[RMDB]
RNA sequence: GGGAACGACUCGAGUAGAGUCGAAAAUAAAGAGCUCCGUAGGCGGCUUUGUUGCGACAGCUGUGAAAAUCUCGUCUCUCAAUUGUGGGCUUUGCAGCUUGAUACGGGCGGGCCUUGAGAUUUGGUAAAUUUUAUUAAAAUUCGUUUUGAUAAAAUUAAAAGAAACAACAACAACAAC
Reactivity to DMS in 0.01 (KOAc 150mM, MgCl2 10mM, bicine 150mM(pH8.5), 24C), signal-to-noise 1, nucleotides 027 to 126: u070a100a070a200g000a220g020c030u010c040c170g030u010a150g040g030c050g020g000c030u000u020u040g010u010u000g040c060g000a080c130a040g000c000u010g000u010g010a080a070a050a100u060c030u020c020g030u000c070u010c060u000c070a070a120u020u000g040u000g000g000g020c130u000u010u010g010c040a070g020c000u010u000g010a110u000a060c030g020g000g010c010g010g000g000c040c010u000u000g000a030g000a060u010u010u020g000g000u020a080
Structure probing data (DMS) for a 177-nucleotide construct. For DMS the reverse transcriptase was MarathonRT. The data come from the RNA Mapping Database (RMDB), library OK1LIB. The reactions ran in a buffer of 150 mM KOAc, 10 mM MgCl2 and 150 mM bicine (pH 8.5), at 24 C.